[RMDB]
The data come from the RNA Mapping Database (RMDB), library TTRDES. Chemical mapping of a 177-nucleotide RNA with DMS. For DMS the reverse transcriptase was MarathonRT.
RNA sequence: GGGAACGACUCGAGUAGAGUCGAAAAGAUAUGGAGUCAGGGAAGGCAACAGCCAAUGGGUCGGAAACGACCCUUGGACAUGCCUUUCCUGACUCCUAAGUCAAACCGACCCGUUCGCGGGUCGGAACAGAAAAGGUGUGUUCGCACACCUUUUCUGAAAAGAAACAACAACAACAAC
Reactivity to DMS in 0.01 (KOAc 150mM, MgCl2 10mM, bicine 150mM(pH8.5), 24C), signal-to-noise 2, nucleotides 027 to 126: g000a000u000a300u000g000g020a020g020u000c000a000g010g010g000a000a010g010g020c030a060a070c300a210g010c030c010a020a000u010g030g010g000u000c010g000g000a110a170a260c000g010a000c000c000c000u000u000g010g020a020c120a250u010g010c000c000u000u000u000c000c000u010g010a000c000u000c000c000u010a050a030g010u000c020a100a170a170c020c010g000a020c000c000c000g050u000u030c200g040c040g040g000g010u000c010g000g000a020a120
Reactivities are given for positions 27 through 126.